[RMDB]
RNA sequence: GGGAACGACUCGAGUAGAGUCGAAAAGAUAUGGAUACCAAGGGAGCUCCAGUAUCGGAAACGAUACGGAGCAUCGAUCUUGAGUAUCCUAAGUCAAAACUGACGCCAUGUUCGCAUGGCGUCAGAAGAAUUACCUACCGUUCGCGGUAGGUAAUUCAAAAGAAACAACAACAACAAC
Reactivity to 2A3 in 0.01 (KOAc 150mM, MgCl2 10mM, bicine 150mM(pH8.5), 24C), signal-to-noise 2, nucleotides 027 to 126: g000a000u020a010u050g000g000a000u000a000c010c010a000a000g080g030g000a090g000c000u000c010c050a170g040u010a010u010c010g000g040a000a000a010c020g000a000u000a000c000g020g020a000g000c010a010u040c010g010a010u030c010u000u110g040a160g050u000a010u000c000c000u010a020a000g010u000c000a000a010a150a220c000u000g010a010c000g000c010c000a000u000g070u070u150c300g000c200a000u040g000g000c000g000u000c000a000g000a000a010
Reactivity to DMS in 0.01 (KOAc 150mM, MgCl2 10mM, bicine 150mM(pH8.5), 24C), signal-to-noise 2, nucleotides 027 to 126: g000a020u000a120u010g000g000a020u000a000c000c000a030a010g000g020g020a020g020c000u000c000c000a160g010u000a000u000c000g040g020a020a020a040c000g020a030u000a000c000g000g000a000g030c020a050u010c200g010a060u000c000u000u000g000a180g010u000a000u000c010c000u020a010a110g000u000c010a110a060a150a180c000u000g010a000c010g010c000c000a010u000g000u000u010c280g020c000a020u000g000g010c000g000u010c000a000g000a040a130
Annotation:
An RNA of 177 nucleotides, treated with 2A3 and DMS and read out base by base. 2A3 adducts were read by reverse transcription with SuperScript II with manganese. For DMS, 2,469 sequencing reads were counted. In probing experiments dimethyl sulfate is read out at A N1 and C N3, which are open when not base-paired. The reactions ran in a buffer of 150 mM KOAc, 10 mM MgCl2 and 150 mM bicine (pH 8.5), at 24 C.